[RMDB]
RNA sequence: GGGAACGACUCGAGUAGAGUCGAAAAAUCCUCAGGUUCAUAAGCGUGAUGAUUGGGAGUUCAUGCUCCAUGCAUGACAUGUGCCUCCUUUGAACCUUGUUACGACCUUGGCACAUUACCCAUCUGAAAAAGACGUUCGCGUUCGCGCGAACGUCAACUACUCAGGAUCGUUCGCGAUCCUGAGUAGAAAAGAAACAACAACAACAAC
Reactivity to 2A3 in 0.01 (KOAc 150mM, MgCl2 10mM, bicine 150mM(pH8.5), 24C), signal-to-noise 2, nucleotides 027 to 156: a040u010c000c010u010c020a000g030g000u000u000c000a010u080a250a060g070c170g110u100g050a070u050g000a030u120u180g010g010g010a110g020u100u020c010a010u010g000c010u040c150c090a060u260g000c010a010u000g000a010c000a020u020g000u010g010c000c000u000c000c000u020u000u010g010a010a020c000c000u020u080g090u020u160a100c120g070a060c030c090u030u050g020g000c000a000c010a030u020u160a080c000c000c010a000u000c000u040g110a150a070a000a030a030g000a000c000g000u000u010c000g030c010g000u030u020c300g000c000g020c000g100a000a000c000g010u000c000a000a000
This 207-nucleotide RNA was probed chemically with 2A3. Conditions: 150 mM KOAc, 10 mM MgCl2 and 150 mM bicine (pH 8.5), 24 C. It was measured as part of the RMDB library M2RFOK. 2A3 adducts were read by reverse transcription with SuperScript II with manganese.